[RMDB]
Notes
The record gives the reactivity of an RNA of 207 nucleotides to 2A3. 2A3 adducts were read by reverse transcription with SuperScript II with manganese. Conditions: 150 mM KOAc, 10 mM MgCl2 and 150 mM bicine (pH 8.5), 24 C. The data come from the RNA Mapping Database (RMDB), library M2RFPK. For 2A3, 643 sequencing reads were counted.

RNA sequence: GGGAACGACUCGAGUAGAGUCGAAAACCUGGCUCGAAAUCGUCGACGCAUCGACGACGGUCGUGCCAUGAGACCGUAACGAGGACAUGUCGCCUCGAAUGGCGUCGGGGAGCCGGCAGCUUACCCCAAAACGACCGCAGCUUCGGCUGCGGUCGAAGUGAUAUUACCGGUUCGCCGGUAAUAUCACAAAAGAAACAACAACAACAAC
Reactivity to 2A3 in 0.01 (KOAc 150mM, MgCl2 10mM, bicine 150mM(pH8.5), 24C), signal-to-noise 1, nucleotides 027 to 156: c000c010u020g030g020c030u050c060g030a080a160a190u050c010g060u000c000g010a010c060g000c130a120u080c040g050a060c030g000a000c010g030g010u010c010g020u060g030c000c000a010u020g110a020g010a030c030c010g040u060a100a010c040g000a000g010g060a000c080a170u240g060u220c110g000c000c000u030c010g010a020a020u090g050g000c010g000u070c050g000g000g000g040a020g040c020c040g100g000c030a020g040c030u080u180a110c000c000c000c000a100a050a000a000c000g010a000c000c000g000c000a000g030c000u170u120c290g050g000c010u000g000c010g000g000u010c010g000a000a010